[RMDB]
The record gives the reactivity of an RNA of 207 nucleotides to 2A3 and DMS. It was measured as part of the RMDB library RNAMAK. For 2A3, 6,364 sequencing reads were counted. DMS adducts were read by reverse transcription with MarathonRT. 2A3 adducts were read by reverse transcription with SuperScript II with manganese. The RNA was probed in 150 mM KOAc, 10 mM MgCl2 and 150 mM bicine (pH 8.5) at 24 C.
RNA sequence: GGGAACGACUCGAGUAGAGUCGAAAAAAACGCUGGGACCGCGUAUAUGGACGACAGUGUAGCUAUCCUGAAGCGCGCACGGGAUAGCGUAGAGACUGUCGAGAACCAUAUGAUCGGUCCUGUGCUGAAGCGCGCACGGCAACCGAAAGGUGCGAAACAUGUGAUGAUUGUUCGCAAUCAUCACAUGAAAAGAAACAACAACAACAAC
Reactivity to 2A3 in 0.01 (KOAc 150mM, MgCl2 10mM, bicine 150mM(pH8.5), 24C), signal-to-noise 3, nucleotides 027 to 156: a000a000a020c030g020c010u010g000g000g000a000c000c000g000c030g180u270a020u000a010u050g030g020a060c010g000a000c000a000g010u010g030u070a020g020c000u010a000u000c000c000u030g050a200a070g010c000g000c000g000c010a020c010g010g000g010a000u000a000g010c010g010u050a000g010a000g010a000c000u000g000u000c000g000a010g020a030a120c010c000a010u010a000u030g040a070u280c000g000g010u000c000c000u000g010u000g000c000u010g010a120a030g010c000g000c000g000c000a000c010g000g000c000a000a010c010c010g050a010a060a030g000g010u030g000c020g010a070a050a020
Reactivity to DMS in 0.01 (KOAc 150mM, MgCl2 10mM, bicine 150mM(pH8.5), 24C), signal-to-noise 2, nucleotides 027 to 156: a040a050a020c030g040c000u000g030g010g050a040c020c000g050c180g070u010a080u000a010u000g030g030a130c000g030a010c020a020g030u000g010u000a050g010c000u010a000u000c010c000u000g000a060a070g040c010g050c030g000c030a300c050g010g010g000a040u000a010g000c010g010u000a030g000a090g000a050c000u000g010u000c000g010a080g010a210a180c010c000a060u000a010u000g000a090u020c010g080g060u000c000c000u000g010u000g020c050u000g000a050a050g020c020g020c020g040c020a300c010g000g000c030a060a060c020c030g000a040a090a210g020g040u010g040c030g020a200a060a220